[RMDB]
RNA sequence: GGGAACGACUCGAGUAGAGUCGAAAACUAUGUACAGACAGUACAGUGGAUAAGGUCUCUAGAUAUCCAACUUCAACAAUGGUACUUGCAGUGGUAUCUAUCAAGAUAGGCAGGCUAUCAUAGAAAGAAGAUGUGUUUGAUUCGUUGGACGCAUCUUAAAAGAAACAACAACAACAAC
Reactivity to 2A3 in 0.01 (KOAc 150mM, MgCl2 10mM, bicine 150mM(pH8.5), 24C), signal-to-noise 9, nucleotides 027 to 126: c010u030a070u110g010u000a020c020a100g180a040c040a030g070u010a010c010a040g060u070g100g040a120u070a230a100g150g080u020c020u000c000u050a010g020a060u040a030u040c030c010a040a050c020u040u040c000a020a020c020a070a190u120g090g010u090a060c020u010u020g000c020a030g020u040g080g020u030a000u000c000u000a090u080c050a050a020g020a030u020a010g030g050c050a010g070g000c020u010a000u020c010a030u030a040g120a040a090a010g090
Reactivity to DMS in 0.01 (KOAc 150mM, MgCl2 10mM, bicine 150mM(pH8.5), 24C), signal-to-noise 9, nucleotides 027 to 126: c040u010a060u010g010u000a010c020a130g010a130c230a140g010u000a010c010a060g020u020g010g010a120u010a070a120g010g000u010c040u010c030u010a080g000a110u010a040u020c010c020a070a130c090u010u010c030a060a090c180a090a040u010g000g000u010a030c060u000u000g000c040a100g020u020g010g020u000a010u000c000u000a070u050c220a060a040g000a020u010a020g000g010c040a040g000g010c170u000a010u000c010a030u000a070g000a080a070a070g010